[RMDB]
RNA sequence: GGGAACGACUCGAGUAGAGUCGAAAAGCGCCAUUCGCGCGAGCGAGGCCGCGCGAGCGAGACGGCCGGUCCGCCUGAUUCGAUCGACUCCGGCCCAAUCGACCUGAUUCGCCCGAUCGAACGGCGAUGAGGGUAUACGAUUCGUCGUAUACCCUCAAAAAGAAACAACAACAACAAC
Reactivity to 2A3 in 0.01 (KOAc 150mM, MgCl2 10mM, bicine 150mM(pH8.5), 24C), signal-to-noise 3, nucleotides 027 to 126: g030c020g010c020c020a090u050u050c000g000c000g000c020g030a020g010c040g080a090g050g190c030c000g040c010g000c010g010a020g030c050g000a020g030a030c010g010g000c010c020g010g020u060c070c030g060c030c050u300g040a300u100u070c080g050a080u030c040g100a100c080u010c030c010g010g000c000c010c000a000a030u020c020g080a080c020c020u100g020a090u040u040c050g070c020c020c030g030a070u030c030g020a020a040c000g010g000c020g000a040
Reactivity to DMS in 0.01 (KOAc 150mM, MgCl2 10mM, bicine 150mM(pH8.5), 24C), signal-to-noise 4, nucleotides 027 to 126: g000c030g020c030c110a240u010u010c010g010c020g000c140g000a090g020c010g000a110g010g000c120c040g000c060g030c030g000a050g030c060g000a070g000a300c300g000g010c030c020g010g000u010c110c060g020c010c010u010g010a140u000u010c040g000a070u010c020g010a080c120u000c050c040g000g010c010c010c080a060a160u000c040g000a120c070c080u000g020a130u000u000c070g010c040c010c030g010a010u010c070g000a060a060c110g000g010c020g020a110